Conditions: 150 mM KOAc, 10 mM MgCl2 and 150 mM bicine (pH 8.5), 24 C. An RNA of 177 nucleotides, treated with 2A3 and DMS and read out base by base. The DMS profile rests on 36,916 reads.
[RMDB]
RNA sequence: GGGAACGACUCGAGUAGAGUCGAAAACUAGGUCUCACUAUGUCACCCAGGCUGGUCUUGAACAUGUGGCCUCAAGUGAUCCUCCCACCUUGGCUUCCCAAAGUGCUGGGAUUACAGGUGUGAGCCACGGUUAGAGUAUAUUCGUAUACUCUAACCGAAAAGAAACAACAACAACAAC
Reactivity to 2A3 in 0.01 (KOAc 150mM, MgCl2 10mM, bicine 150mM(pH8.5), 24C), signal-to-noise 9, nucleotides 027 to 126: c040u050a090g000g080u070c020u020c040a010c020u120a130u140g020u010c010a020c010c020c020a030g090g030c060u080g030g060u050c040u140u240g090a170a030c030a120u210g080u150g140g010c000c010u020c040a140a060g010u010g040a040u030c000c010u010c010c010c000a010c010c000u030u040g030g000c040u040u020c010c000c000a010a050a000g100u110g040c110u010g020g010g010a010u030u180a050c050a020g110g020u030g010u010g030a010g020c010c010a030
Reactivity to DMS in 0.01 (KOAc 150mM, MgCl2 10mM, bicine 150mM(pH8.5), 24C), signal-to-noise 9, nucleotides 027 to 126: c100u010a070g010g010u000c030u010c030a050c040u000a070u010g010u010c060a080c080c050c200a090g000g020c040u000g010g000u000c050u010u010g010a090a070c110a090u010g020u000g010g010c020c020u000c070a070a100g010u000g010a050u000c030c020u000c020c040c000a030c020c020u000u000g010g000c180u000u000c030c000c000a070a040a040g010u000g010c110u000g000g000g000a080u000u010a060c160a030g000g020u000g010u000g000a040g010c030c020a190